[RMDB]
RNA sequence: GGGAACGACUCGAGUAGAGUCGAAAACGUGAAGACUUCAUGAAAGCUCGUAUCUACAACAGCAUCGGCACGUUCGCUGUACUGGAUGACGCUGGUUGGCACGAGAAAGGCUCUAUGGGCUGGUUUGUGUCUUCCUCGUCUUCGGACGAGGAAGACAAAAAGAAACAACAACAACAAC
Reactivity to DMS in 0.01 (KOAc 150mM, MgCl2 10mM, bicine 150mM(pH8.5), 24C), signal-to-noise 1, nucleotides 027 to 126: c070g020u010g000a090a090g020a080c060u000u000c050a110u000g020a150a160a070g000c070u010c020g020u010a080u010c040u010a200c080a100a070c080a040g000c040a100u000c080g010g000c060a020c120g000u020u020c100g020c060u010g010u000a080c100u020g000g000a080u010g000a010c060g010c000u000g000g010u010u000g000g000c090a000c000g000a070g000a110a070a160g000g010c010u000c070u010a090u000g000g000g000c020u000g010g030u010u000u000g000
Reactivity to 2A3 in 0.01 (KOAc 150mM, MgCl2 10mM, bicine 150mM(pH8.5), 24C), signal-to-noise 1, nucleotides 027 to 126: c010g050u000g050a130a000g120a160c040u110u050c170a100u060g090a190a050a030g020c050u030c040g060u080a050u000c090u090a130c010a210a020c000a000g000c030a010u020c000g070g040c030a060c120g020u080u060c080g000c020u040g040u130a090c030u060g010g000a100u100g010a030c010g000c180u010g030g000u000u000g020g040c050a010c020g030a030g140a070a070a030g060g020c010u080c080u180a130u250g000g000g020c050u020g070g160u040u100u080g000